[RMDB]
RNA sequence: GGGAACGACUCGAGUAGAGUCGAAAACUACAUCGGCCAACCGUGGAAAACCCAGCGGACGGUCGACCGGGUCCGCGGGCUGUUCGGCCCGACACCUGGCGGUGCGCCGGGCAACGACGACCUCGGCCUGCAGUGCUAUUUUCGAAUAGCACUGCAGAAAAGAAACAACAACAACAAC
Reactivity to 2A3 in 0.01 (KOAc 150mM, MgCl2 10mM, bicine 150mM(pH8.5), 24C), signal-to-noise 2, nucleotides 027 to 126: c040u110a010c040a120u040c010g000g010c010c010a050a050c070c000g000u080g030g060a130a130a080a080c010c020c020a030g140c020g000g010a050c030g000g010u000c000g000a010c000c010g030g000g020u040c050c030g020c040g000g010g010c040u040g120u220u200c130g070g010c000c010c000g010a010c000a010c020c030u040g040g020c060g050g050u150g050c040g000c010c000g000g010g000c050a120a040c030g110a010c030g020a020c020c020u090c030g010g000c000
Reactivity to DMS in 0.01 (KOAc 150mM, MgCl2 10mM, bicine 150mM(pH8.5), 24C), signal-to-noise 2, nucleotides 027 to 126: c050u000a010c070a250u010c000g000g000c010c010a210a300c000c010g050u000g000g010a180a070a120a120c160c000c010a160g020c000g000g030a020c300g000g020u000c030g020a030c090c020g020g000g010u010c050c170g050c090g000g000g000c040u000g020u060u030c080g000g000c000c040c000g030a070c130a050c000c000u010g010g000c080g040g010u000g030c090g000c010c000g000g000g000c040a110a150c030g000a030c160g020a070c020c010u020c000g000g000c090
An RNA of 177 nucleotides, treated with 2A3 and DMS and read out base by base.
Values cover nucleotides 27 to 126.
Conditions: 150 mM KOAc, 10 mM MgCl2 and 150 mM bicine (pH 8.5), 24 C.